Conditions: 150 mM KOAc, 10 mM MgCl2 and 150 mM bicine (pH 8.5), 24 C.
The record gives the reactivity of an RNA of 177 nucleotides to 2A3 and DMS.
[RMDB]
RNA sequence: GGGAACGACUCGAGUAGAGUCGAAAAAGAAAAUCUCUUUUAAUGAGGAGUGAUGUAGUUACAAACUCUCCAGAGCCAUAAUUAGAGCAAACUAAUUGAAGUUGUGUUUUGACACACUUUCCAAAUUCUUAUAACUAUUAUUCGUAAUAGUUAUAAGAAAAGAAACAACAACAACAAC
Reactivity to 2A3 in 0.01 (KOAc 150mM, MgCl2 10mM, bicine 150mM(pH8.5), 24C), signal-to-noise 6, nucleotides 027 to 126: a010g100a010a090a020a050u020c010u000c000u030u080u070u130a140a100u110g030a040g050g010a000g020u020g030a080u100g030u100a140g100u150u150a030c040a030a130a040c010u010c000u000c040c020a030g030a020g150c030c010a060u060a100a050u080u050a010g010a010g060c050a050a090a050c020u080a060a060u080u110g070a090a020g040u150u120g010u030g030u030u110u110u260g090a010c010a000c000a000c020u020u040u000c010c020a030a110a150u020u000
Reactivity to DMS in 0.01 (KOAc 150mM, MgCl2 10mM, bicine 150mM(pH8.5), 24C), signal-to-noise 2, nucleotides 027 to 126: a040g000a090a080a140a110u060c060u000c000u000u000u000u000a100a110u010g010a060g000g000a020g010u000g020a100u010g030u010a090g000u020u020a060c080a050a120a110c070u020c000u000c010c010a070g000a260g040c090c030a040u010a000a020u000u010a020g000a080g010c270a100a050a130c070u010a030a060u000u000g030a060a110g000u000u000g000u010g000u000u010u050u010g020a050c050a040c000a010c040u000u000u010c040c040a070a100a150u060u000